[RMDB]
RNA sequence: GGGAACGACUCGAGUAGAGUCGAAAAGAUAUGGAACUCGAAGAACUCUCACGUCCAUGUACUAGUUUCGCGGUCGGAAACGACCGGCGAAUAAGUACAUGGACGUGAGAGGGAGAGUUCCUAAGUCCAUCCAAUUAGUCUUCGGACUAAUUGGAUGAAAAGAAACAACAACAACAAC
Reactivity to 2A3 in 0.01 (KOAc 150mM, MgCl2 10mM, bicine 150mM(pH8.5), 24C), signal-to-noise 1, nucleotides 027 to 126: g010a030u120a080u190g000g000a000a000c020u030c040g270a300a090g020a120a060c020u000c000u020c040a000c000g000u000c000c010a000u040g010u000a000c040u070a090g300u020u020u000c030g030c030g040g040u020c000g000g090a100a120a110c020g000a000c000c030g030g000c020g030a020a020u090a000a030g010u010a010c000a000u010g000g000a000c000g000u010g020a010g000a010g020g000g000a010g000a010g000u000u000c000c010u010a040a010g030u000c030
Reactivity to DMS in 0.01 (KOAc 150mM, MgCl2 10mM, bicine 150mM(pH8.5), 24C), signal-to-noise 5, nucleotides 027 to 126: g010a100u010a300u010g000g000a000a000c000u000c000g020a150a190g010a170a240c000u000c000u000c000a010c000g010u000c000c000a010u000g000u000a000c010u000a190g020u000u000u000c000g020c000g000g000u000c000g010g010a110a110a250c000g020a000c000c010g030g060c010g010a010a000u010a060a040g010u010a000c000a010u000g000g000a000c000g010u000g000a000g000a010g020g000g000a070g010a020g010u000u000c000c000u000a010a060g010u000c040